[RMDB]
RNA sequence: GGGAACGACUCGAGUAGAGUCGAAAAUUGUUCGGCUUAUUAUUUGUACUACAGUCUGAACUUUGCUAGGAUUCCCUAGAAUAUGAGUAGCAAACCUUCUAAUCAGUCCCAACUAAGGCAUGUGGUAAAUUAACGCGAGGUUCGCCUCGCGUUAAUUAAAAGAAACAACAACAACAAC
Reactivity to DMS in 0.01 (KOAc 150mM, MgCl2 10mM, bicine 150mM(pH8.5), 24C), signal-to-noise 1, nucleotides 027 to 126: u000u000g020u000u000c050g010g000c020u000u040a150u010u000a120u000u030u030g040u020a110c150u000a080c220a020g010u010c010u000g010a060a010c040u000u010u000g020c060u000a070g020g000a220u010u000c020c010c020u010a040g000a120a030u010a080u010g000a040g020u000a070g000c060a020a030a140c080c020u000u000c080u000a150a090u010c060a120g030u000c040c000c000a080a100c150u020a110a060g000g000c010a040u000g000u000g020g020u010a050
Description:
This 177-nucleotide RNA was probed chemically with DMS. The reactions ran in a buffer of 150 mM KOAc, 10 mM MgCl2 and 150 mM bicine (pH 8.5), at 24 C. For DMS, 744 sequencing reads were counted. DMS adducts were read by reverse transcription with MarathonRT. Reactivities are given for positions 27 through 126.